[RMDB]
RNA sequence: GGGAACGACUCGAGUAGAGUCGAAAAGCUUAAGCCAUUUUUAGUUCACCUCUGAGAAACCUUUCCAUUUCUACCUAAAGCAAGCACGCACCCACUUCCUUCUGUAUGCUGGGGUUCAGGUCAUCAGAUCAAGAACAGCAAAGAGGCUGAGUGUGGAAUCCCUCAUAAAUUUCGAUUUAUGAGGGAUAAAAGAAACAACAACAACAAC
Reactivity to 2A3 in 0.01 (KOAc 150mM, MgCl2 10mM, bicine 150mM(pH8.5), 24C), signal-to-noise 4, nucleotides 027 to 156: g010c020u090u090a050a000g030c020c010a140u080u050u040u030u180a060g010u040u040c020a050c060c020u010c040u030g040a040g040a120a080a050c000c010u030u070u090c040c030a090u070u100u130c030u080a120c010c010u090a110a040a010g010c020a040a030g040c020a020c100g050c010a060c020c010c010a030c030u040u040c010c020u060u150c030u070g090u060a080u120g040c060u030g000g030g020g020u040u040c020a010g000g040u020c020a080u040c020a080g010a020u030c020a020a090g030a070a050c010a010g020c000a010a070a090g070a040g050g000c050u050g010a000g020u040g030u090g010g030a040
Reactivity to DMS in 0.01 (KOAc 150mM, MgCl2 10mM, bicine 150mM(pH8.5), 24C), signal-to-noise 2, nucleotides 027 to 156: g000c020u000u000a100a080g030c010c020a080u000u010u000u000u010a110g030u010u000c030a040c060c050u010c010u040g010a190g000a110a080a040c040c020u000u000u000c010c030a120u010u000u000c030u000a080c020c010u010a060a060a060g000c030a090a100g000c020a050c020g010c030a130c010c000c020a100c090u010u000c040c030u000u000c060u000g030u010a090u000g010c020u000g010g020g020g030u000u000c010a090g040g030u000c040a210u000c080a090g000a050u000c050a090a150g000a050a090c010a110g010c060a030a070a070g000a080g020g050c120u000g000a030g020u000g020u000g010g000a190
The record gives the reactivity of an RNA of 207 nucleotides to 2A3 and DMS.
For DMS, 5,185 sequencing reads were counted.
The RNA was probed in 150 mM KOAc, 10 mM MgCl2 and 150 mM bicine (pH 8.5) at 24 C.
High DMS reactivity at an A or C suggests that its Watson-Crick edge is free.